[RMDB]
RNA sequence: GGGAACGACUCGAGUAGAGUCGAAAAGCUUUACUCAAAGCUGCUAAGGAGCGCAGAGAACUUGAGUAUCGAUCUGCCGUGUUUGGUGACUUCAGAUAUUGGAUUUGGGCCGCAUUCCUAGUCGCUCGGAGGAUUUAGCAUUCGUGCUAAAUCCUCCAAAAGAAACAACAACAACAAC
Reactivity to 2A3 in 0.01 (KOAc 150mM, MgCl2 10mM, bicine 150mM(pH8.5), 24C), signal-to-noise 1, nucleotides 027 to 126: g020c000u050u110u020a020c020u000c010a000a030a030g010c030u000g000c010u100a130a080g150g070a110g070c060g000c020a010g000a010g000a160a130c020u030u050g030a010g020u010a020u110c030g060a070u000c020u050g060c050c020g070u060g030u060u000u100g070g000u020g030a020c000u070u000c040a030g030a100u100a100u120u160g080g020a050u180u030u070g000g010g040c000c020g040c010a020u040u010c000c020u000a000g050u060c040g020c100u060c020
Reactivity to DMS in 0.01 (KOAc 150mM, MgCl2 10mM, bicine 150mM(pH8.5), 24C), signal-to-noise 1, nucleotides 027 to 126: g000c010u000u000u000a030c050u000c070a030a050a150g040c030u000g020c040u010a050a090g010g010a100g020c130g000c010a080g000a110g000a070a080c150u000u040g010a040g020u010a020u000c070g000a070u010c050u020g020c030c020g010u000g030u010u010u000g000g000u000g000a050c050u000u000c040a080g030a060u000a060u000u010g000g000a050u000u020u010g000g020g000c040c000g000c090a120u000u000c010c010u000a090g020u000c110g010c090u000c170